[RMDB]
RNA sequence: GGGAACGACUCGAGUAGAGUCGAAAACAGCUACUCGGGAGGCUGAGGCUGGAGGAUCGCUUGAGUCCAGGAGUUCUGGGCUGUAGUGCGCUAUGCCGAUCGGGUGUCCGCACUAAGUUCGGCAUCAAUAUGGUGACCUCCCGGGAGCGGGGGACCAUCCUAGGAAUCAGUUCGCUGAUUCCUAGGAAAAAGAAACAACAACAACAAC
Reactivity to 2A3 in 0.01 (KOAc 150mM, MgCl2 10mM, bicine 150mM(pH8.5), 24C), signal-to-noise 1, nucleotides 027 to 156: c030a000g030c000u080a180c060u300c000g000g000g000a000g020g030c060u080g000a040g090g030c000u080g030g110a060g020g070a120u130c000g000c060u020u130g290a000g000u000c000c000a010g010g030a190g080u300u150c010u000g010g000g000c000u010g030u010a000g000u000g000c020g000c010u070a010u000g020c010c010g030a080u180c040g060g000g000u050g010u000c060c110g030c020a050c020u010a090a140g010u040u000c000g010g000c000a010u090c050a030a130u160a140u300g010g030u060g060a150c000c000u010c020c010c000g000g000g000a000g010c010g000g040g000g010g000a000c000c000a100